An RNA of 177 nucleotides, treated with DMS and 2A3 and read out base by base.
Conditions: 150 mM KOAc, 10 mM MgCl2 and 150 mM bicine (pH 8.5), 24 C.
For DMS the reverse transcriptase was MarathonRT.
RNA sequence: GGGAACGACUCGAGUAGAGUCGAAAACUUAUAUAGCCUUCAUUCAUGGUGGCAGUAAAAUGUUUAUUGUGUUUGAAUGUGUUUAUGUAAGAGGAGCCGUACCUGUUGGUAUGUCUCAUUAUAAUGAGUUAUACGAGUGGUUCGCCACUCGUAUAACAAAAGAAACAACAACAACAAC
Reactivity to DMS in 0.01 (KOAc 150mM, MgCl2 10mM, bicine 150mM(pH8.5), 24C), signal-to-noise 2, nucleotides 027 to 126: c000u000u000a020u010a020u010a010g010c010c010u010u000c000a010u000u000c010a020u000g020g040u000g010g000c000a030g010u000a080a090a130a140u000g010u000u000u020a020u000u000g020u000g000u000u000u000g000a030a010u000g010u000g040u000u020u000a000u000g010u000a000a000g010a200g000g000a030g000c040c010g010u000a010c010c000u000g030u010u010g020g020u000a010u000g000u000c000u000c000a050u010u000a110u000a090a090u020g000a270
Reactivity to 2A3 in 0.01 (KOAc 150mM, MgCl2 10mM, bicine 150mM(pH8.5), 24C), signal-to-noise 2, nucleotides 027 to 126: c000u000u010a000u000a000u010a010g000c000c000u000u010c010a000u000u000c000a000u000g000g000u010g010g080c000a000g020u010a010a060a040a040u030g060u030u190u270a000u020u010g000u000g000u040u000u000g040a020a020u060g140u020g020u110u270u040a010u000g010u000a020a000g050a110g150g000a010g020c000c000g000u000a000c000c030u170g180u300u300g030g000u010a010u020g010u000c000u010c000a060u120u170a110u010a070a160u110g050a020
The DMS profile rests on 2,927 reads.